[RMDB]
RNA sequence: GGGAACGACUCGAGUAGAGUCGAAAAGGCAGUGGGUCCGUCUCCUCGUCAGACAGUCCGUCGCUAUCCGCUGCCAUCCGUUGCUAUAUAGCCUGAAUAUACGGACCACUACAUGUCACUUUAAUCUCUUGGAAGUGUCACUUUUGCAGCUCUCCAAGGCCUACCUUUUAUUCGUAAAAGGUAGGCCAAAAGAAACAACAACAACAAC
Reactivity to 2A3 in 0.01 (KOAc 150mM, MgCl2 10mM, bicine 150mM(pH8.5), 24C), signal-to-noise 2, nucleotides 027 to 156: g020g020c010a000g000u000g030g000g020u040c030c070g060u020c030u090c150c070u090c070g060u140c030a050g000a060c000a070g100u090c000c070g020u000c020g000c070u040a060u050c040c010g000c040u030g000c000c010a000u030c040c010g030u000u120g060c060u020a040u050a020u130a300g000c000c020u030g110a220a040u100a050u010a090c040g000g000a000c000c010a030c010u090a050c060a070u140g000u050c000a000c050u050u010u100a080a070u060c070u050c020u090u030g060g010a050a050g010u000g090u110c060a120c090u070u140u130u160g030c050a100g020c050u000c000u000c050c000a020a020
Overview:
An RNA of 207 nucleotides, treated with 2A3 and read out base by base. The RNA was probed in 150 mM KOAc, 10 mM MgCl2 and 150 mM bicine (pH 8.5) at 24 C. The 2A3 profile rests on 793 reads. It was measured as part of the RMDB library OK3TST. For 2A3 the reverse transcriptase was SuperScript II with manganese.